Chemical mapping of a 177-nucleotide RNA with DMS and 2A3. The RNA was probed in 150 mM KOAc, 10 mM MgCl2 and 150 mM bicine (pH 8.5) at 24 C. 2A3 adducts were read by reverse transcription with SuperScript II with manganese.
RNA sequence: GGGAACGACUCGAGUAGAGUCGAAAAGCACACUCUCUCCAUUUCUCUACCGUUCAUGCAGCGGUUGAUCGAUUGGGUUGCUGGUUGAUUGAUCGAUCGAUGGUCAGGAGUUGGAAGAGAAUUGGAGCUUAUUACAAACCUUCGGGUUUGUAAUAAGAAAAGAAACAACAACAACAAC
Reactivity to DMS in 0.01 (KOAc 150mM, MgCl2 10mM, bicine 150mM(pH8.5), 24C), signal-to-noise 3, nucleotides 027 to 126: g010c110a080c150a100c150u000c060u000c000u000c000c000a010u000u000u010c000u000c000u000a090c000c000g000u010u000c010a050u000g010c050a090g010c010g010g030u000u000g010a010u000c010g000a010u000u000g010g010g000u000u000g030c090u010g010g010u010u010g010a030u010u000g010a010u000c000g000a020u000c010g000a030u010g010g020u010c030a050g010g010a050g000u010u010g040g000a170a030g010a020g000a020a020u000u000g000g000a040g020
Reactivity to 2A3 in 0.01 (KOAc 150mM, MgCl2 10mM, bicine 150mM(pH8.5), 24C), signal-to-noise 3, nucleotides 027 to 126: g100c030a020c000a020c150u080c010u000c010u000c020c000a010u010u030u000c010u000c010u020a090c000c010g030u020u020c010a020u030g040c020a030g050c020g040g010u000u020g000a000u000c010g010a010u010u030g100g060g110u130u190g090c110u130g030g130u080u040g020a000u000u020g000a010u000c020g000a000u020c000g020a060u080g070g100u190c020a030g030g020a020g030u300u300g100g010a030a020g000a000g000a000a010u000u010g010g000a000g020